[RMDB]
RNA sequence: GGGAACGACUCGAGUAGAGUCGAAAACAGUCCUCAGUACUCUUACUCUUUUCUGUAAAGAGGAGACUGCUGGACCCGCCGCCCAAGUUCGAGCAUGAGCCAUAGUUCCGAACGAGGUGAUCGCGAGGAGCAGGAUCAGCGCCCGAGAGGGGUAAAUCCUAUGUAUUUACUUCGGUAAAUACAUAGGAAAAGAAACAACAACAACAAC
Reactivity to 2A3 in 0.01 (KOAc 150mM, MgCl2 10mM, bicine 150mM(pH8.5), 24C), signal-to-noise 4, nucleotides 027 to 156: c040a000g010u010c010c000u000c010a010g030u190a300c040u020c030u080u160a250c000u060c000u130u240u210u090c180u300g240u300a030a030a010g010a000g030g000a000g010a000c010u020g070c110u010g010g000a010c010c020c030g100c030c020g000c010c010c020a070a080g110u070u010c010g000a010g000c040a050u010g000a010g000c010c010a130u040a130g020u010u000c020c000g010a010a000c010g000a030g060g110u290g100a120u030c000g000c010g020a030g010g000a010g020c010a020g010g020a020u020c000a010g050c020g000c260c030c000g040a030g010a040g030g020g030g010u030a080a120a040u010